[RMDB]
RNA sequence: GGGAACGACUCGAGUAGAGUCGAAAAGUCAGAAAGUAUCCUUCACCAUCGAAAGCGGCGCUAAAGGCCCGGCAGCUGGCAACGUAACUUCUCUGUAAGUUCAAGCCGCUAAGAAUCGAGAAUCCCUUCGAUGUUUGAUUUUCGAAUCAAACAUCGAAAAAGAAACAACAACAACAAC
Reactivity to 2A3 in 0.01 (KOAc 150mM, MgCl2 10mM, bicine 150mM(pH8.5), 24C), signal-to-noise 2, nucleotides 027 to 126: g050u060c040a030g090a040a160a000g100u020a110u120c010c010u000u090c060a020c030c000a040u040c030g040a050a000a090g020c020g020g010c020g000c060u150a120a070a120g050g000c000c010c010g040g020c030a030g010c040u110g000g020c020a040a010c070g040u060a020a010c000u050u010c130u060c060u160g190u260a020a000g010u010u010c040a050a020g000c000c020g010c000u010a030a010g040a010a060u030c020g000a000g030a060a050u010c000c000c000u020
Reactivity to DMS in 0.01 (KOAc 150mM, MgCl2 10mM, bicine 150mM(pH8.5), 24C), signal-to-noise 1, nucleotides 027 to 126: g060u030c090a020g040a100a100a010g030u000a050u090c000c000u000u000c100a200c140c090a010u000c000g050a100a140a050g030c000g000g000c040g020c160u080a010a180a110g000g000c040c000c100g000g030c140a040g000c130u120g000g000c040a090a000c180g000u120a040a000c030u000u020c060u010c230u020g000u030a020a050g000u000u000c160a040a130g000c000c030g000c040u000a020a230g000a120a060u000c000g000a040g020a180a140u030c000c000c000u060